[RMDB]
Chemical mapping of a 177-nucleotide RNA with DMS and 2A3.
For DMS, 890 sequencing reads were counted.
Values cover nucleotides 27 to 126.
The RNA was probed in 150 mM KOAc, 10 mM MgCl2 and 150 mM bicine (pH 8.5) at 24 C.
2A3 adducts were read by reverse transcription with SuperScript II with manganese.
RNA sequence: GGGAACGACUCGAGUAGAGUCGAAAAGAACGAAACUUCGGUUUCGUUCAAAUAAUGCGUAGCUCGCGCUACGCAGCCAACGAGUAGGUCGUGCCACCUACAAAAGAUUUUAGUUCGCUAAAAUCAACGAGUGCAUUAGGUUCGCCUAAUGCACUCGAAAAGAAACAACAACAACAAC
Reactivity to DMS in 0.01 (KOAc 150mM, MgCl2 10mM, bicine 150mM(pH8.5), 24C), signal-to-noise 1, nucleotides 027 to 126: g020a030a000c000g010a000a010a010c000u000u000c180g040g020u010u000u010c000g010u000u010c000a000a120a070u020a120a050u010g040c000g030u000a000g000c000u020c300g000c300g020c000u010a000c000g000c010a000g020c000c020a200a040c070g010a180g010u000a020g000g010u000c040g030u010g000c070c240a070c000c030u000a010c000a080a050a060a100g010a020u000u000u000u000a020g040u000u010c150g020c010u000a000a020a010a010u000c010a170a100
Reactivity to 2A3 in 0.01 (KOAc 150mM, MgCl2 10mM, bicine 150mM(pH8.5), 24C), signal-to-noise 2, nucleotides 027 to 126: g000a010a000c000g010a000a000a000c020u060u150c260g050g000u030u000u010c000g000u000u000c000a000a010a000u120a050a040u030g000c000g000u000a000g010c040u050c150g070c020g000c060u000a000c000g000c010a000g030c000c000a060a060c030g020a020g070u010a010g000g050u150c020g070u100g190c070c050a010c010c000u010a000c010a020a090a000a010g010a010u040u010u020u000a010g010u010u050c180g000c130u020a010a000a000a010u030c010a010a010